Structure probing data (2A3 and DMS) for a 177-nucleotide construct.
For DMS the reverse transcriptase was MarathonRT.
Reactivities are given for positions 27 through 126.
It was measured as part of the RMDB library OK1LIB.

RNA sequence: GGGAACGACUCGAGUAGAGUCGAAAAGAAUGUAUGUAAACCGUGUGGCACACAAUGGCUAUUCAGGAAUCGUUCUGAGGAAACAGGUAAAAUGGAAGAAAGCCAAAUCCUUAGCACACGGAAGAAAAAUCCAUAUGGAUUUCGAUCCAUAUGGAUUAAAAGAAACAACAACAACAAC
Reactivity to 2A3 in 0.01 (KOAc 150mM, MgCl2 10mM, bicine 150mM(pH8.5), 24C), signal-to-noise 7, nucleotides 027 to 126: g150a080a100u190g030u120a040u070g080u130a070a040a020c010c000g000u000g000u000g120g060c050a030c020a000c020a090a080u030g020g000c010u090a200u100u060c020a010g090g070a090a070u070c050g050u050u020c010u040g060a090g050g140a080a070a070c020a030g000g030u090a070a180a080a060u110g050g010a030a020g050a130a070a020g010c000c010a040a020a030u050c010c010u030u090a020g030c010a000c000a000c000g020g010a040a010g010a000a090a010
Reactivity to DMS in 0.01 (KOAc 150mM, MgCl2 10mM, bicine 150mM(pH8.5), 24C), signal-to-noise 8, nucleotides 027 to 126: g000a100a080u020g010u010a040u010g010u010a080a090a100c010c000g010u010g000u010g000g020c080a080c140a060c150a120a120u020g010g000c010u000a120u020u010c020a050g000g000a100a080u020c100g020u010u010c020u000g010a090g010g020a070a060a100c080a110g000g010u020a030a050a090a090u020g000g010a100a090g000a050a070a050g000c000c000a030a040a090u010c050c040u000u020a070g020c020a010c010a010c000g000g010a070a090g000a020a050a050